Structure probing data (DMS and 2A3) for a 177-nucleotide construct. Reactivities are rounded to 0.1 and cut off at 0 and 3. For 2A3 the reverse transcriptase was SuperScript II with manganese. Reactivities are given for positions 27 through 126. The RNA was probed in 150 mM KOAc, 10 mM MgCl2 and 150 mM bicine (pH 8.5) at 24 C. The data come from the RNA Mapping Database (RMDB), library OK2TST.

[RMDB]
RNA sequence: GGGAACGACUCGAGUAGAGUCGAAAAUGUCAGGUCGCACACCGCCGCAGAGUGGUAGGUGGCGUCGGUCCUCCUGGCCAUCGCUGGGGUGAGCUUCUCCCAGGGUUUGCCGUCUGGGCACGGGGGCGACCCUCUGCAAGUUCGCUUGCAGAGGGUCAAAAGAAACAACAACAACAAC
Reactivity to DMS in 0.01 (KOAc 150mM, MgCl2 10mM, bicine 150mM(pH8.5), 24C), signal-to-noise 1, nucleotides 027 to 126: u030g010u000c080a080g000g000u000c010g030c040a100c040a040c010c000g000c020c000g020c050a130g000a190g040u020g000g030u000a030g060g010u000g010g000c020g000u000c100g000g020u000c010c030u000c030c000u000g020g000c030c030a070u000c090g000c060u020g000g000g010g060u000g020a100g000c060u000u000c080u000c030c010c000a080g000g000g000u000u010u010g020c000c020g020u010c050u010g010g010g000c100a020c140g000g010g000g000g040c260
Reactivity to 2A3 in 0.01 (KOAc 150mM, MgCl2 10mM, bicine 150mM(pH8.5), 24C), signal-to-noise 2, nucleotides 027 to 126: u190g020u060c060a000g060g040u030c010g020c000a060c000a010c030c000g030c040c010g100c120a060g110a080g200u140g020g010u040a160g000g040u050g000g040c020g040u040c080g040g090u030c000c000u030c000c020u030g070g000c010c000a110u080c070g050c160u040g000g080g000g020u080g040a030g040c000u130u020c030u030c040c010c000a010g060g000g010u020u070u080g010c040c020g110u090c070u080g030g020g000c030a010c020g000g000g010g000g020c030